Overview
An RNA of 207 nucleotides, treated with 2A3 and DMS and read out base by base. For DMS the reverse transcriptase was MarathonRT. Source: RMDB library M2RFPK, as collected in RNAgym. Values cover nucleotides 27 to 156.

RNA sequence: GGGAACGACUCGAGUAGAGUCGAAAAGAAUCACCGUACCUAUUUAGGUUUACGCUCCAAGAACGGUGGAUAGCAGCCCUAUCAAUAUCUAGGAGAACUGUGCUAUGUUUAGAAGAUUAGGUAGUCUAUUACACAGCCAUGUUCGCAUGGCUGUGAACCCAUCUUUAUGGUUCGCCAUAAAGAUGGGAAAAGAAACAACAACAACAAC
Reactivity to 2A3 in 0.01 (KOAc 150mM, MgCl2 10mM, bicine 150mM(pH8.5), 24C), signal-to-noise 4, nucleotides 027 to 156: g050a020a040u090c000a010c010c000g050u030a030c000c010u070a170u250u240u300a040g000g000u030u050u070a040c050g030c010u020c010c010a040a020g020a060a020c010g030g010u030g020g030a030u060a020g120c100a020g000c000c000c000u030a060u090c070a090a060u080a050u220c030u020a010g010g000a050g020a060a090c100u090g010u020g090c020u030a040u090g080u060u100u030a110g030a150a040g020a130u120u040a060g070g060u020a020g050u010c020u040a090u050u110a100c010a000c000a010g000c000c000a000u010g000u040u040c080g000c120a000u000g000g000c000u010g000u010g000a000a000
Reactivity to DMS in 0.01 (KOAc 150mM, MgCl2 10mM, bicine 150mM(pH8.5), 24C), signal-to-noise 3, nucleotides 027 to 156: g000a110a130u000c010a170c040c010g010u000a080c000c010u000a260u010u010u000a030g020g020u000u000u010a100c030g030c030u010c020c030a090a110g010a070a090c050g030g060u010g010g010a070u000a090g020c020a130g040c040c050c010u000a160u010c050a080a130u010a080u000c090u000a090g010g000a080g020a100a050c050u000g010u000g020c030u010a110u010g010u000u000u000a130g000a070a080g000a100u000u000a090g000g000u000a100g010u010c030u010a080u010u010a120c000a020c000a010g020c020c000a010u000g010u000u000c300g020c000a020u000g010g000c000u000g030u000g000a020a090